RNA sequence: GGGAACGACUCGAGUAGAGUCGAAAAAGGCUAAAGAGUGGACGAUUUUCGGGGAAGGUCUCCCAAGAAGAACCAGGAACACCUCAAGAAGAGGAGACUUCCCCAAGGGUAGGUGGAACGCCAGGGAUGAGAGUAUUGUUCGCAAUACUCAAAAGAAACAACAACAACAAC
Reactivity to DMS in 0.01 (KOAc 150mM, MgCl2 10mM, bicine 150mM(pH8.5), 24C), signal-to-noise 9, nucleotides 027 to 129: a050g040g000c070u000a060a070a050g000a080g030u000g000g000a050c070g000a080u030u010u020u010c060g010g020g020g030a000a000g000g010u030c000u020c010c020c050a120a090g000a070a070g000a050a080c090c080a070g000g000a090a090c140a090c040c020u020c030a080a080g000a090a070g020a110g000g000a010g030a060c040u030u010c010c000c010c010a000a020g030g020g020u010a020g010g050u010g010g030a020a050c090g020c020c060a040g000g000g000a050u020g000a120
Reactivity to 2A3 in 0.01 (KOAc 150mM, MgCl2 10mM, bicine 150mM(pH8.5), 24C), signal-to-noise 9, nucleotides 027 to 129: a000g050g000c050u090a060a030a020g080a020g020u060g010g010a020c040g010a070u030u090u130u120c060g030g000g000g010a000a010g050g060u010c000u000c020c000c010a010a010g060a030a010g030a030a040c040c020a030g020g050a060a060c060a070c050c020u060c040a040a090g080a060a010g060a080g020g010a000g010a000c000u010u020c000c000c000c020a020a020g030g000g020u060a040g010g050u050g020g020a040a020c040g010c020c010a010g030g010g000a040u070g030a020
An RNA of 170 nucleotides, treated with DMS and 2A3 and read out base by base. Reactivities are given for positions 27 through 129. For 2A3, 44,003 sequencing reads were counted. Values are in units of 0.01, from 0 to 300, in steps of 10. For DMS, 87,166 sequencing reads were counted.